[RMDB]
Source information
Structure probing data (2A3 and DMS) for a 177-nucleotide construct. For DMS the reverse transcriptase was MarathonRT. The 2A3 profile rests on 2,736 reads. The DMS profile rests on 2,024 reads. For 2A3 the reverse transcriptase was SuperScript II with manganese.
RNA sequence: GGGAACGACUCGAGUAGAGUCGAAAAUGGCCGACAAAGAUAGCGCACUCCAGGUGCUUCAAAAGCUUGAAGCAGAGCCGGCGUCCAUCGGACCAUUGAAGGGCAAGACCGGUAUUCUCGCCAGCAACGAGUCCAUACGAUUCGUCGUAUGGACUCGAAAAGAAACAACAACAACAAC
Reactivity to 2A3 in 0.01 (KOAc 150mM, MgCl2 10mM, bicine 150mM(pH8.5), 24C), signal-to-noise 3, nucleotides 027 to 126: u050g020g000c000c000g020a040c070a080a110a020g100a110u160a030g010c010g030c010a020c030u010c040c020a090g030g100u050g010c000u010u030c000a060a050a040a140g090c080u050u030g030a050a000g020c010a020g010a040g060c040c010g010g020c020g010u010c010c000a010u020c030g070g040a130c020c010a040u030u110g090a060a100g010g000g010c120a110a030g040a170c010c030g010g000u030a110u060u060c030u000c020g030c010c030a040g050c040a060a090
Reactivity to DMS in 0.01 (KOAc 150mM, MgCl2 10mM, bicine 150mM(pH8.5), 24C), signal-to-noise 2, nucleotides 027 to 126: u000g000g010c000c000g000a060c130a040a060a110g030a110u000a070g000c000g000c040a110c070u000c030c100a110g030g060u000g000c000u000u030c040a020a000a130a130g010c140u030u050g000a020a000g000c000a110g030a230g010c080c070g000g150c000g000u040c040c100a170u020c050g050g000a050c030c060a040u000u060g000a090a070g000g000g000c040a060a010g000a110c010c120g050g010u000a060u010u030c040u030c110g000c020c030a060g000c090a100a110